[RMDB]
RNA sequence: GGGAACGACUCGAGUAGAGUCGAAAAUACACAGCAGUGAGGGCAUGGGUGCUAAGGUCCAUGUCCGAGAGGGAAAGAACCCAGACCAUCAUCUAAGGUCCCUAAAUCUAUGCUAAGUUGAUCAAACCGAAUUCAAUCUGUUCGCAGAUUGAAUUCGAAAAGAAACAACAACAACAAC
Reactivity to DMS in 0.01 (KOAc 150mM, MgCl2 10mM, bicine 150mM(pH8.5), 24C), signal-to-noise 1, nucleotides 027 to 126: u010a060c100a080c100a070g010c060a080g000u000g010a280g000g000g000c030a000u010g020g000g000u000g030c240u000a040a060g020g000u000c010c000a010u000g030u000c000c000g010a020g000a120g030g000g020a070a040a080g000a150a090c030c000c040a090g000a050c070c050a030u000c090a100u000c030u010a070a080g000g000u000c000c010c000u000a040a080a110u000c190u000a070u030g000c010u050a090a130g040u010u000g000a040u000c090a100a120a210c170